[RMDB]
RNA sequence: GGGAACGACUCGAGUAGAGUCGAAAAUAACGGAAUGACAUCCGAAGGACCCAAGGAAACCGAAACCAAAUGGGCGCAACUCCCCUUCCCUGCGCGGGUAGCGCAGACCAGGAAAGGGAAGGGAAAAGCAUUUUCUGACAUUCGUGUCAGGAAGUGCAAAAGAAACAACAACAACAAC
Reactivity to DMS in 0.01 (KOAc 150mM, MgCl2 10mM, bicine 150mM(pH8.5), 24C), signal-to-noise 8, nucleotides 027 to 126: u050a080a120c040g010g010a030a040u010g020a160c210a150u000c010c030g010a130a090g000g000a180c010c010c010a080a080g000g010a040a080a120c070c060g010a080a090a080c050c050a030a090a090u020g000g000g000c030g000c110a090a110c090u010c060c000c000c010u000u000c000c000c000u020g000c050g000c020g000g030g030u020a120g010c010g010c030a050g000a050c100c140a130g010g000a050a100a030g000g000g000a010a020g010g010g010a030a050a080a120
Reactivity to 2A3 in 0.01 (KOAc 150mM, MgCl2 10mM, bicine 150mM(pH8.5), 24C), signal-to-noise 9, nucleotides 027 to 126: u190a080a030c030g000g030a050a080u140g070a080c020a090u010c010c010g000a010a010g070g020a070c000c000c020a020a050g090g010a050a100a070c090c080g030a110a030a020c030c020a040a060a120u110g020g020g000c040g000c040a030a100c040u120c010c000c000c000u010u000c010c000c000u030g000c030g000c010g030g170g130u180a050g000c000g000c010a010g020a020c030c060a030g020g120a130a080a030g020g000g000a010a020g010g000g000a040a100a000a010